Overview:
Structure probing data (DMS and 2A3) for a 177-nucleotide construct. Source: RMDB libraries RFM100 and RFMREP, as collected in RNAgym.
RNA sequence: GGGAACGACUCGAGUAGAGUCGAAAAAAUGGGCCCAACCACAAGUCGGUCUCUGUUUUGAUCCUUGGAAACUCACCCGAAAUACAGUCAGAAGUCAAGCCUGUCGAGUUUCACAGUCAAGACGCGCAUCUUAACCCUCUUUCGAGAGGGUUAAGAUAAAAGAAACAACAACAACAAC
Reactivity to DMS in 0.01 (KOAc 150mM, MgCl2 10mM, bicine 150mM(pH8.5), 24C), signal-to-noise 5, nucleotides 027 to 126: a090a070u010g020g000g000c080c000c020a090a120c050c040a120c120a090a070g000u000c050g010g000u020c010u020c010u010g020u000u000u000u020g000a060u000c060c040u010u040g000g010a070a030a030c020u010c040a140c080c050c040g010a070a070a130u020a060c120a080g000u000c060a080g010a070a120g000u010c120a060a170g010c110c020u000g030u000c120g000a030g000u000u000u000c020a050c090a060g010u010c060a040a080g010a010c040g010c190g000c180
Reactivity to 2A3 in 0.01 (KOAc 150mM, MgCl2 10mM, bicine 150mM(pH8.5), 24C), signal-to-noise 5, nucleotides 027 to 126: a010a010u120g000g010g030c010c010c000a050a030c040c010a080c030a120a040g050u070c010g030g020u000c010u020c030u070g080u020u030u060u050g080a050u050c010c000u010u060g050g010a020a040a020c020u000c030a080c000c050c030g070a110a070a030u160a040c020a010g060u060c000a030g030a130a010g110u050c090a050a020g030c000c020u030g010u080c050g040a020g020u020u040u030c080a080c020a030g030u030c010a020a000g020a000c020g020c010g000c090